[RMDB]
Structure probing data (DMS and 2A3) for a 177-nucleotide construct.
It was measured as part of the RMDB library OK1LIB.
The reactions ran in a buffer of 150 mM KOAc, 10 mM MgCl2 and 150 mM bicine (pH 8.5), at 24 C.
The 2A3 profile rests on 2,029 reads.
DMS adducts were read by reverse transcription with MarathonRT.

RNA sequence: GGGAACGACUCGAGUAGAGUCGAAAAGAGCAGAGGCUGUAUCCGGUCUGCAAACACGACAGGGCUGGAAUGUCACCUGGAGUGGGACGGACUACUGGCUGUCUCCGGAGUAGGACGUCCGAAGAGAGGCAUGCAGCACGUUCGCGUGUUGCAUGCCAAAAGAAACAACAACAACAAC
Reactivity to DMS in 0.01 (KOAc 150mM, MgCl2 10mM, bicine 150mM(pH8.5), 24C), signal-to-noise 2, nucleotides 027 to 126: g000a110g000c020a080g000a010g050g000c060u010g030u010a090u050c060c040g020g020u000c020u030g000c050a090a090a190c050a050c080g000a070c030a100g030g000g040c080u000g000g010a110a100u010g010u020c040a100c010c010u000g000g030a110g020u000g010g000g000a030c060g030g000a000c000u000a000c000u000g000g000c040u000g000u000c060u070c030c040g000g000a020g000u000a020g000g000a040c000g000u000c000c000g000a120a020g000a060g000a200
Reactivity to 2A3 in 0.01 (KOAc 150mM, MgCl2 10mM, bicine 150mM(pH8.5), 24C), signal-to-noise 2, nucleotides 027 to 126: g040a000g010c070a020g020a020g080g040c000u020g050u070a130u080c050c050g010g100u000c010u020g060c050a110a000a010c020a000c010g020a000c000a020g000g040g000c000u060g080g060a180a080u120g030u090c040a050c080c000u020g000g000a010g000u060g000g010g000a000c000g040g000a030c000u000a000c000u010g150g020c030u060g000u040c030u010c080c010g020g010a010g000u020a010g030g010a020c040g020u030c000c020g060a080a010g100a020g020a000